Notes
This 207-nucleotide RNA was probed chemically with 2A3 and DMS. It was measured as part of the RMDB library OK3TST. The 2A3 profile rests on 1,893 reads. DMS adducts were read by reverse transcription with MarathonRT. The reactions ran in a buffer of 150 mM KOAc, 10 mM MgCl2 and 150 mM bicine (pH 8.5), at 24 C. For 2A3 the reverse transcriptase was SuperScript II with manganese.
RNA sequence: GGGAACGACUCGAGUAGAGUCGAAAACUCGCUCAAACAUACAGAGAUGUUGUGCGACAUGAAUCUCUCUGCAUUAGAAUGGUCGAAGAAUCAGCGGCCAUUCGAGACCAAAUUAGAAGCCGCAUUAACAGCUUUGGAACACGCCUUGCUGACGUGAAUAGUCACCAGUAUUCGUACUGGUGACUAUAAAAGAAACAACAACAACAAC
Reactivity to 2A3 in 0.01 (KOAc 150mM, MgCl2 10mM, bicine 150mM(pH8.5), 24C), signal-to-noise 4, nucleotides 027 to 156: c020u010c010g070c020u080c050a160a080a060c030a060u140a040c010a030g070a030g020a040u010g010u030u010g000u010g020c010g010a010c030a060u210g070a140a120u060c060u000c000u020c050u100g060c060a130u050u050a050g020a020a000u020g010g000u000c030g020a090a040g070a170a230u120c070a050g040c000g000g000c010c000a010u000u000c000g000a000g000a010c030c020a070a040a090u140u070a110g030a130a010g070c030c020g060c080a080u080u140a060a020c020a030g030c000u090u040u110g040g030a090a000c010a010c050g020c010c010u060u100g000c070u080g020a040c030g020u010g040a050
Reactivity to DMS in 0.01 (KOAc 150mM, MgCl2 10mM, bicine 150mM(pH8.5), 24C), signal-to-noise 2, nucleotides 027 to 156: c050u000c030g040c070u000c050a140a060a110c090a140u010a150c020a020g010a060g020a040u010g030u000u000g000u010g000c010g020a050c020a130u020g010a140a080u010c090u010c050u000c040u000g010c010a110u030u010a120g020a050a020u000g020g020u000c010g010a140a200g020a130a090u010c120a190g040c010g050g040c000c020a020u010u000c000g000a180g010a100c080c040a060a110a090u000u000a100g030a120a110g030c000c010g000c020a060u010u000a030a050c010a030g020c010u050u010u010g010g010a090a130c040a060c020g010c020c020u000u000g000c150u010g000a040c040g000u000g010a170